[RMDB]
RNA sequence: GGGAACGACUCGAGUAGAGUCGAAAAGUGCUUUCCGUAAACUAGAAUUACCAAUUUCGGUUCAAUAUGGUUUGGUUGAAGAACUGACACUCAAAAUACCAUGGUCUUCUUUAAAGAAUAAACCAGAAUACUAGCUACUGUUCGCAGUAGCUAGUAUAAAAGAAACAACAACAACAAC
Reactivity to 2A3 in 0.01 (KOAc 150mM, MgCl2 10mM, bicine 150mM(pH8.5), 24C), signal-to-noise 2, nucleotides 027 to 126: g030u010g010c000u020u020u000c000c030g030u050a020a030a040c040u060a050g110a120a090u140u040a080c010c010a080a100u100u110u200c140g050g000u080u020c080a060a030u020a100u200g050g000u000u000u050g030g000u050u100g070a120a040g010a080a020c090u040g010a080c000a000c050u050c000a000a060a060a070u110a100c020c020a060u030g030g000u000c030u030u000c000u030u260u150a200a260a100g000a080a020u120a090a030a000c010c010a020g150a080
Reactivity to DMS in 0.01 (KOAc 150mM, MgCl2 10mM, bicine 150mM(pH8.5), 24C), signal-to-noise 3, nucleotides 027 to 126: g020u000g000c040u000u010u000c060c030g010u020a120a040a040c040u000a030g000a100a080u000u010a080c030c040a080a170u000u000u000c160g030g000u000u000c120a060a070u000a110u010g000g020u010u010u000g000g000u000u010g000a130a200g010a040a030c240u000g010a130c080a090c030u020c080a080a100a130a110u010a060c070c080a130u010g010g010u000c060u000u000c010u000u010u010a090a090a100g000a040a040u010a070a110a040c010c010a100g010a110
Structure probing data (2A3 and DMS) for a 177-nucleotide construct. The DMS profile rests on 1,787 reads. For 2A3, 1,278 sequencing reads were counted. For DMS the reverse transcriptase was MarathonRT.